[RMDB]
RNA sequence: GGGAACGACUCGAGUAGAGUCGAAAAAUCGGGAACCUAUUACUGUGUCACCACUAAGGCUAAGUCCGUUCAACAAGAUCUUGACGUUAUUUUGCCUGGUGAGUUUUCCAAGAAGCAGUUAGGACUGGUUACAUGAUCUCUUCGGAGAUCAUGUAACAAAAGAAACAACAACAACAAC
Reactivity to DMS in 0.01 (KOAc 150mM, MgCl2 10mM, bicine 150mM(pH8.5), 24C), signal-to-noise 3, nucleotides 027 to 126: a080u010c070g010g000g010a150a140c020c040u000a020u020u000a080c010u000g020u010g010u020c070a070c020c010a050c060u010a080a060g000g000c000u000a020a030g000u000c300c010g000u020u000c000a020a030c230a120a180g020a140u010c130u000u000g000a020c010g000u000u020a060u000u000u000u000g000c010c000u000g010g010u010g010a070g020u000u000u000u000c100c090a120a100g010a100a160g000c020a010g000u000u000a010g010g010a130c080u000g000
Reactivity to 2A3 in 0.01 (KOAc 150mM, MgCl2 10mM, bicine 150mM(pH8.5), 24C), signal-to-noise 3, nucleotides 027 to 126: a000u100c020g020g000g080a100a140c010c000u020a060u080u050a020c020u020g010u020g100u160c010a000c000c000a000c040u070a190a040g010g000c010u010a010a000g010u000c020c020g040u170u130c020a020a050c030a130a030g070a210u070c030u030u010g000a000c000g040u100u070a040u010u020u030u040g000c010c000u000g020g010u020g020a080g020u040u070u080u020c050c020a050a000g020a040a010g020c030a010g000u020u000a020g020g010a030c040u060g090
Structure probing data (DMS and 2A3) for a 177-nucleotide construct.
For 2A3, 2,497 sequencing reads were counted.
For DMS, 2,081 sequencing reads were counted.
High 2A3 reactivity points to a flexible backbone, as in loops and unpaired stretches.
For DMS the reverse transcriptase was MarathonRT.
Reactivities are given for positions 27 through 126.
2A3 adducts were read by reverse transcription with SuperScript II with manganese.